[RMDB]
The record gives the reactivity of an RNA of 207 nucleotides to DMS and 2A3. DMS adducts were read by reverse transcription with MarathonRT. Conditions: 150 mM KOAc, 10 mM MgCl2 and 150 mM bicine (pH 8.5), 24 C. The data come from the RNA Mapping Database (RMDB), library RNAMAK.
RNA sequence: GGGAACGACUCGAGUAGAGUCGAAAACGGUCUUUCGAGACCGAGAACGAUAUGGAUGGUCAACAGCAACAGCGAACGUAACAUCGUAUUCGGAAACGAAUACGUGGUUCGACAUGCUGGUCGCCAUCCUAAGUCAAGGACCCGGCUUCGGCCGGAAAACUGGAUAUGUGUUCGCACAUAUCCAGUUAAAAGAAACAACAACAACAAC
Reactivity to DMS in 0.01 (KOAc 150mM, MgCl2 10mM, bicine 150mM(pH8.5), 24C), signal-to-noise 2, nucleotides 027 to 156: c040g010g000u000c000u000u020u020c250g020a040g020a030c000c000g010a040g020a060a130c080g000a130u000a260u000g000g000a010u020g030g000u000c030a060a030c030a000g000c000a040a070c060a240g010c010g010a010a020c000g060u010a120a070c130a030u000c000g040u000a000u000u020c010g000g010a210a120a260c010g020a030a010u000a010c000g020u000g010g000u010u000c000g000a040c070a300u010g010c000u000g000g060u000c200g010c000c000a010u010c010c000u000a010a090g000u010c020a160a150g010g020a170c090c010c000g020g000c010u000u010c300g050g040c000c030g060g000a000a020
Reactivity to 2A3 in 0.01 (KOAc 150mM, MgCl2 10mM, bicine 150mM(pH8.5), 24C), signal-to-noise 4, nucleotides 027 to 156: c020g000g000u000c020u040u170u090c300g120a040g000a030c040c030g000a030g020a010a040c080g000a010u000a020u080g000g000a010u000g000g030u090c060a120a060c000a120g000c030a040a090c060a180g020c010g000a000a000c000g020u050a020a040c020a280u120c010g000u000a000u000u000c000g010g000a020a020a020c000g000a000a000u000a000c000g000u000g000g000u000u000c000g040a020c060a120u300g010c010u000g010g010u030c010g010c000c010a000u000c000c000u000a000a000g000u000c010a010a050g130g060a110c040c020c000g000g000c010u060u080c190g080g000c000c000g000g000a060a080